[RMDB]
RNA sequence: GGGAACGACUCGAGUAGAGUCGAAAACAACGGUAUAAAGUGCUUCACCGUCUGGUUCUACGACAUAAGCUUCUUGGGUAGAUACCUCGCUAGCUAAGUCUGCUCCGGCCAUUGAAGGCUGUGAUUUUACUAUCUCAAUGAGCUCAUCAUGAGGCUAUCCUGAUAGCUGAUUCGUCAGCUAUCAGGAAAAAGAAACAACAACAACAAC
Reactivity to DMS in 0.01 (KOAc 150mM, MgCl2 10mM, bicine 150mM(pH8.5), 24C), signal-to-noise 2, nucleotides 027 to 156: c040a030a050c040g000g020u020a110u000a070a040a100g020u010g020c070u010u010c030a040c010c000g020u000c000u000g020g000u010u000c010u000a070c010g020a060c040a120u020a110a100g000c050u000u010c050u010u000g010g050g030u000a040g000a100u000a040c050c010u000c070g000c080u000a070g020c030u000a140a100g020u000c000u010g030c000u000c010c030g010g000c010c020a180u010u030g030a120a240g000g000c000u000g000u010g000a040u000u000u020u020a070c080u000a070u020c020u010c050a030a080u010g000a090g030c020u000c020a140u020c100a130u010g010a110g010g010c050u000a110
Reactivity to 2A3 in 0.01 (KOAc 150mM, MgCl2 10mM, bicine 150mM(pH8.5), 24C), signal-to-noise 3, nucleotides 027 to 156: c040a040a010c050g000g010u040a070u100a090a210a040g100u090g080c020u050u100c020a010c040c000g020u040c040u060g060g050u080u010c040u120a080c030g060a020c010a030u220a030a040g010c000u040u010c000u030u070g030g010g040u020a050g040a190u100a080c000c020u010c020g100c130u040a010g040c010u030a000a090g030u020c100u040g020c010u080c040c030g000g020c000c000a020u040u210g110a180a070g040g000c050u000g030u030g040a020u000u060u120u020a040c050u030a060u070c010u000c030a040a150u120g000a060g050c060u100c100a130u050c010a080u150g010a050g020g030c030u120a050